Chemical mapping of a 307-nucleotide RNA with 2A3 and DMS. The RNA was probed in 150 mM KOAc, 10 mM MgCl2 and 150 mM bicine (pH 8.5) at 24 C. Values cover nucleotides 27 to 266.
RNA sequence: GGGAACGACUCGAGUAGAGUCGAAAAACGACGCGCUACGGCGCGUCGAUAAACCCUUUGACUGCUCAAAAUGGGCGCCAUUGAAUGUUGGGCUGUGGAGGAAAAUUAACUUAUGCCUCGGUUUGAACGAAAAUGGUUAAACUUUAGGAGCAAACUGAAAGUACGUUGUUCCACCAUUGAGGCUAUAGGGUAUUAGGAUGGAACAUCUUCGUCAUGUCGCGGAGCGACGUGAUGUAUUUUCCCGCACAUACGCAUACGUGCGUAUGAGGUGGAUCUUCGGAUCCACCAAAAGAAACAACAACAACAAC
Reactivity to 2A3 in 0.01 (KOAc 150mM, MgCl2 10mM, bicine 150mM(pH8.5), 24C), signal-to-noise 2, nucleotides 027 to 266: a010c000g030a000c000g080c000g030c000u040a040c270g060g010c000g060c000g030u000c010g010a000u000a000a050a000c000c000c000u010u010u080g090a080c040u110g020c030u100c120a190a290a140a210u110g010g000g000c050g000c020c030a010u000u110g110a140a070u160g010u010u000g060g030g020c070u050g010u080g140g050a040g040g100a000a130a010a030u080u060a130a000c000u040u020a000u280g020c000c000u000c000g020g030u160u110u140g180a080a060c060g040a130a090a070a040u050g030g000u070u100a080a060a010c040u130u130u130a080g000g010a010g030c010a090a010a040c090u120g130a080a020a090g110u150a040c120g000u010u010g010u020u000c000c000a000c010c010a070u050u150g020a000g010g000c000u000a000u080a050g080g020g000u100a100u040u160a050g030g050a010u040g020g050a060a030c020a060u020c000u100u040c010g010u000c010a000u000g000u000c010g000c030g220g100a170g020c000g000a020c000g000u000g000a000u000g010u000a010u010u060u020u020c010c000c020g040c010a030c010a040u020a010c010g000c010a010u030a080c220g200u060g010c000g010u000a000u010g020a050
Reactivity to DMS in 0.01 (KOAc 150mM, MgCl2 10mM, bicine 150mM(pH8.5), 24C), signal-to-noise 3, nucleotides 027 to 266: a130c020g030a010c040g070c000g120c020u010a130c140g050g070c080g090c050g050u010c000g000a030u010a090a210a170c020c010c010u000u010u000g010a110c120u010g030c020u000c010a120a060a120a100u030g010g010g010c090g000c020c040a030u010u030g020a130a100u000g010u000u010g010g020g000c010u010g000u000g000g020a060g000g000a060a050a040a070u010u010a120a140c070u010u000a050u020g010c010c010u010c000g000g020u000u010u010g020a070a040c060g000a100a080a040a060u010g000g000u000u030a050a130a120c070u000u020u010a080g000g010a030g010c030a040a060a030c040u000g010a080a090a250g010u000a050c130g030u000u000g040u010u000c000c020a050c090c060a100u010u010g010a050g030g000c010u000a040u010a010g000g010g010u000a050u010u020a040g000g000a020u010g000g030a110a060c100a040u010c060u010u000c050g010u000c010a010u000g000u000c000g010c010g000g000a190g020c020g020a010c000g010u000g000a010u000g000u010a020u000u000u000u000c000c040c050g000c140a160c000a010u000a000c000g000c000a030u000a100c210g020u020g010c000g010u000a000u000g010a070